[RMDB]
RNA sequence: GGGAACGACUCGAGUAGAGUCGAAAAGAGGGGACCGUCCUCCUCGGUAAUGGCGAAUGGGACCCCAGAUUUCCUUCCUAUUGAGAAGGAAAUAACUGGCACUCCCUUAGCCAUCCGAGUGGACGUUGCCUAUAUGAAUGUUCGCAUUCAUAUAGGCAAAAGAAACAACAACAACAAC
Reactivity to 2A3 in 0.01 (KOAc 150mM, MgCl2 10mM, bicine 150mM(pH8.5), 24C), signal-to-noise 4, nucleotides 027 to 126: g080a020g000g010g000g010a020c020c010g010u010c010c010u060c060c030u000c010g000g000u070a080a030u000g010g000c010g020a040a030u030g000g000g000a010c150c000c000c000a000g000a020u010u010u000c010c000u010u000c060c010u250a300u240u300g110a300g010a050a000g000g060a000a000a000u040a030a030c000u000g000g000c020a030c040u020c000c000c010u010u020a000g010c010c000a000u000c000c000g000a000g010u010g000g010a010c000g010u030u030
Reactivity to DMS in 0.01 (KOAc 150mM, MgCl2 10mM, bicine 150mM(pH8.5), 24C), signal-to-noise 4, nucleotides 027 to 126: g020a130g010g000g010g010a180c210c010g000u000c010c000u010c300c010u010c000g010g000u000a020a030u000g010g010c000g010a140a080u000g020g010g020a030c150c300c000c010a010g020a070u000u000u000c000c000u000u000c000c020u000a160u000u010g010a180g010a010a010g000g000a000a000a000u000a040a090c020u000g010g010c120a170c290u000c000c000c000u010u000a300g000c000c010a000u000c000c000g000a020g030u010g000g020a000c000g030u000u010

Structure probing data (2A3 and DMS) for a 177-nucleotide construct. 2A3 adducts were read by reverse transcription with SuperScript II with manganese. For 2A3, 9,150 sequencing reads were counted. The reactions ran in a buffer of 150 mM KOAc, 10 mM MgCl2 and 150 mM bicine (pH 8.5), at 24 C. It was measured as part of the RMDB library 15KREP.